[RMDB]
RNA sequence: GGGAACGACUCGAGUAGAGUCGAAAAGAGUUCGGUUUGAGCGACAAGUAUUUAGCUUGAGAUAGCUAAAUCACCUCGGUAUGAUUAGGGUGAGACCUAGGAACCGUAGGGGUAUUCUCAAAGGAAGGUUACCGAACAACCUUCGGGUUGUUCGGAACUUUCAGUAUGUAUUCGUACAUACUGAAAGAAAAGAAACAACAACAACAAC
Reactivity to 2A3 in 0.01 (KOAc 150mM, MgCl2 10mM, bicine 150mM(pH8.5), 24C), signal-to-noise 3, nucleotides 027 to 156: g090a000g040u080u060c030g020g070u030u060u080g030a030g010c030g070a060c040a070a020g060u090a070u000u010u000a000g010c000u030u030g020a020g010a080u120a050g010c000u000a010a000a010u000c010a010c000c010u010c010g020g000u300a240u160g030a030u010u010a020g010g010g020u050g100a090g060a060c000c000u010a010g000g030a020a000c020c010g010u050a040g000g010g000g000u010a080u170u080c020u010c000a040a050a000g070g020a050a010g040g060u080u080a050c000c020g000a000a000c000a000a000c000c000u020u040c070g060g010g000u010u010g010u000u000c000g000g010a010a000
Reactivity to DMS in 0.01 (KOAc 150mM, MgCl2 10mM, bicine 150mM(pH8.5), 24C), signal-to-noise 2, nucleotides 027 to 156: g000a090g050u010u000c010g010g010u010u050u060g010a080g010c120g000a070c040a020a070g010u000a020u000u000u000a010g010c000u000u000g010a250g000a140u000a040g010c000u010a020a010a000u000c020a030c000c000u010c010g020g010u010a060u000g010a300u010u000a040g010g000g020u000g000a300g030a230c000c010u000a080g000g020a110a060c030c020g040u000a050g010g010g010g010u010a040u000u000c020u000c020a060a050a060g000g000a080a050g020g020u000u000a170c000c000g000a010a000c000a010a020c000c000u010u000c250g050g030g020u000u000g010u000u000c010g010g000a000a010
An RNA of 207 nucleotides, treated with 2A3 and DMS and read out base by base. The RNA was probed in 150 mM KOAc, 10 mM MgCl2 and 150 mM bicine (pH 8.5) at 24 C. The 2A3 profile rests on 3,460 reads. Source: RMDB library M2RFPK, as collected in RNAgym. For DMS, 4,750 sequencing reads were counted.